The record gives the reactivity of an RNA of 177 nucleotides to DMS and 2A3. In probing experiments dimethyl sulfate is read out at A N1 and C N3, which are open when not base-paired. DMS adducts were read by reverse transcription with MarathonRT. It was measured as part of the RMDB libraries RFM100 and RFMREP.
RNA sequence: GGGAACGACUCGAGUAGAGUCGAAAAGGAUACCGCUGUAGAGAUAAGAGACUGUAGCUCUAUGGCCACCAAGAGCACGGAUAACAAAAACAAUGUAUUCUUCGAUGAGCCUGCCUGAAUGAGUUUCAGGUAGGCAGAUCUUCGGAUCUGCCUACCUAAAAGAAACAACAACAACAAC
Reactivity to DMS in 0.01 (KOAc 150mM, MgCl2 10mM, bicine 150mM(pH8.5), 24C), signal-to-noise 3, nucleotides 027 to 126: g020g000a040u000a010c050c100g030c020u000g000u020a040g000a030g000a060u010a110a160g000a130g020a090c050u030g000u010a050g000c020u020c000u010a020u020g000g000c030c050a080c040c070a090a060g000a110g030c010a030c080g000g020a070u060a120a070c120a010a050a090a110a070c140a130a060u020g000u000a090u000u010c020u010u000c070g000a050u000g010a150g000c030c010u000g030c000c000u000g000a010a070u060g000a070g010u000u000u000c010
Reactivity to 2A3 in 0.01 (KOAc 150mM, MgCl2 10mM, bicine 150mM(pH8.5), 24C), signal-to-noise 4, nucleotides 027 to 126: g050g010a010u030a040c010c010g000c010u010g010u040a040g010a000g070a170u090a280a030g070a000g030a080c040u060g060u130a050g010c010u000c000u000a130u050g040g000c040c020a070c000c000a040a000g030a010g030c040a030c040g010g040a080u090a210a020c120a030a070a090a010a000c050a120a020u110g040u040a170u100u000c010u040u090c030g070a100u070g060a020g020c040c000u020g010c020c000u020g050a070a080u140g010a090g070u020u030u000c000